Structure probing data (2A3 and DMS) for a 177-nucleotide construct.
The reactions ran in a buffer of 150 mM KOAc, 10 mM MgCl2 and 150 mM bicine (pH 8.5), at 24 C.
For DMS the reverse transcriptase was MarathonRT.
[RMDB]
RNA sequence: GGGAACGACUCGAGUAGAGUCGAAAAAAGUGCUUUGGAAUGACACGAUCACUCCCGUUGAGUGGGCACCCAAGUAGCCAUCGGGAAUGUCGUGUCCGCCCAGUGCUAAAACGACGCUUCGGCGUCGGUGUAAGUAAACCUUCGGGUUUACUUACACAAAAGAAACAACAACAACAAC
Reactivity to 2A3 in 0.01 (KOAc 150mM, MgCl2 10mM, bicine 150mM(pH8.5), 24C), signal-to-noise 7, nucleotides 027 to 126: a020a010g090u050g010c030u140u140u080g020g010a060a050u090g010a020c000a000c010g010a050u190c030a010c050u000c020c000c000g020u020u060g080a260g090u110g020g220g030c050a080c000c050c020a120a040g030u060a030g040c010c010a010u010c010g010g000g000a010a030u060g010u010c000g000u000g000u010c000c000g010c000c000c000a010g000u010g010c010u060a070a050a040a080c010g010a000c000g010c000u040u050c170g120g000c000g000u000c010g000
Reactivity to DMS in 0.01 (KOAc 150mM, MgCl2 10mM, bicine 150mM(pH8.5), 24C), signal-to-noise 5, nucleotides 027 to 126: a080a040g030u000g010c020u000u010u010g020g000a160a290u000g000a020c000a010c010g000a020u020c120a020c050u000c010c010c000g020u000u000g010a110g030u010g000g010g000c060a110c080c060c100a090a130g010u010a260g000c010c000a020u000c010g000g000g000a030a020u000g010u000c010g010u000g020u010c010c240g000c300c000c120a040g010u000g000c000u000a050a030a080a300c020g010a010c000g010c000u000u020c150g020g000c000g010u000c000g000
Values are in units of 0.01, from 0 to 300, in steps of 10. In probing experiments dimethyl sulfate is read out at A N1 and C N3, which are open when not base-paired.